Chemical mapping of a 177-nucleotide RNA with DMS.
Conditions: 150 mM KOAc, 10 mM MgCl2 and 150 mM bicine (pH 8.5), 24 C.
RNA sequence: GGGAACGACUCGAGUAGAGUCGAAAAGAUAUGGAGAAAUCGUAGCGCUAGGAGCAAAUCGGAAACGAUUUGGCUCCUUGGACCGCUACGAGUUUCUCCUAAGUCAAAAGUCCCGUUCGCGGGACAACCACCCUGCUAAGUUCGCUUAGCAGGGUGGAAAAGAAACAACAACAACAAC
Reactivity to DMS in 0.01 (KOAc 150mM, MgCl2 10mM, bicine 150mM(pH8.5), 24C), signal-to-noise 1, nucleotides 027 to 126: g000a070u000a300u010g000g020a010g010a050a030a070u000c010g010u000a000g000c000g010c020u000a000g010g010a050g010c000a000a000a010u010c000g020g000a170a100a230c000g000a000u000u000u000g020g040c000u000c000c000u000u010g000g000a130c300c050g000c000u000a000c000g010a040g010u010u000u010c000u000c000c000u000a000a110g000u000c050a100a060a150a170g030u000c000c000c010g000u010u000c300g080c000g000g090g000a010c000a030a080